[RMDB]
RNA sequence: GGGAACGACUCGAGUAGAGUCGAAAAAAAGGUGGUCCAGGCUUUGGCGCGCGCAGAUCUCAACGCUGACACGCGUGUGCACGUCUCUGCCACUGCGGAAGCAGCUGACAACAGCGCUCCCAACGAGACAUGUUAGUACCUUCGGGUACUAACAUGUAAAAGAAACAACAACAACAAC
Reactivity to 2A3 in 0.01 (KOAc 150mM, MgCl2 10mM, bicine 150mM(pH8.5), 24C), signal-to-noise 4, nucleotides 027 to 126: a000a000a000g040g000u030g000g040u000c030c030a020g040g000c020u170u150u210g080g000c000g000c000g000c000g000c030a070g030a300u040c040u020c090a130a270c160g050c160u080g050a060c030a010c160g010c000g010u010g010u040g020c010a010c040g030u020c010u000c030u040g010c020c000a020c030u050g000c060g010g020a090a040g000c110a040g000c030u020g030a050c040a300a020c000a100g000c030g000c010u010c000c010c000a030a020c050g080a020g020
Reactivity to DMS in 0.01 (KOAc 150mM, MgCl2 10mM, bicine 150mM(pH8.5), 24C), signal-to-noise 5, nucleotides 027 to 126: a050a050a070g000g020u000g000g010u000c100c080a060g030g000c020u010u010u000g020g010c020g020c050g030c020g010c020a080g030a130u010c100u000c090a110a100c220g020c060u000g010a140c160a160c100g020c010g020u010g010u010g000c020a030c300g010u000c010u000c080u000g010c020c010a050c040u000g020c090g000g020a060a070g020c020a070g010c050u000g020a100c300a070a110c050a030g010c010g000c030u000c010c000c010a090a120c150g010a140g010